An RNA of 307 nucleotides, treated with DMS and read out base by base.
For DMS the reverse transcriptase was MarathonRT.
RNA sequence: GGGAACGACUCGAGUAGAGUCGAAAAGAUUUAGACACUCUACGAAAUCGUUGGGCCCUACUGGACAAGCCUUUGGCCAGAAUCCACUUUCAGGGGGUGGAGGGUAGCAUAGGGUAUCACCCAAUUGCCACUCCUUUGAUCCCGCGACACUACUAGAAGCCUAAAGUUCGCGGUUGGCCCUACUAAUCGGCAUCGCACCCCGCCGGACCUCCCCCCAUCAACGGCUGUCACAGUCUGGGGCGGGAGUCCGUGGGCGUCUGGAUGUCCUCGCGGCAUUCGUGCCGCGAAAAAGAAACAACAACAACAAC
Reactivity to DMS in 0.01 (KOAc 150mM, MgCl2 10mM, bicine 150mM(pH8.5), 24C), signal-to-noise 1, nucleotides 027 to 266: g030a180u000u030u000a130g020a300c300a020c000u000c010u040a020c000g010a190a140a140u000c020g000u050u000g000g020g000c000c000c110u010a060c140u000g000g000a030c000a000a020g000c190c130u010u010u020g030g050c000c010a040g010a180a160u020c090c000a040c160u000u050u010c040a110g000g000g000g000g000u000g000g000a090g000g000g000u000a000g030c080a070u000a230g000g020g000u020a170u050c150a060c000c000c020a110a180u060u020g030c000c010a000c000u000c020c080u040u000u000g000a050u010c210c000c000g000c010g000a020c220a020c020u000a090c060u000a080g020a230a140g000c130c110u000a010a060a090g000u000u000c020g010c030g000g020u000u020g020g000c000c010c050u000a100c130u050a150a080u030c260g000g000c020a000u000c030g000c100a050c050c020c000c030g000c080c060g020g000a010c040c010u000c000c000c000c000c000c000a150u020c290a110a080c160g000g000c010u000g010u000c070a050c020a000g050u010c010u000g000g020g040g020c220g120g000g020a050g010u000c040c010g000u010g040g060g030c190g040u020c050u000g040g000a040u000g010u020c040c140
The RNA was probed in 150 mM KOAc, 10 mM MgCl2 and 150 mM bicine (pH 8.5) at 24 C.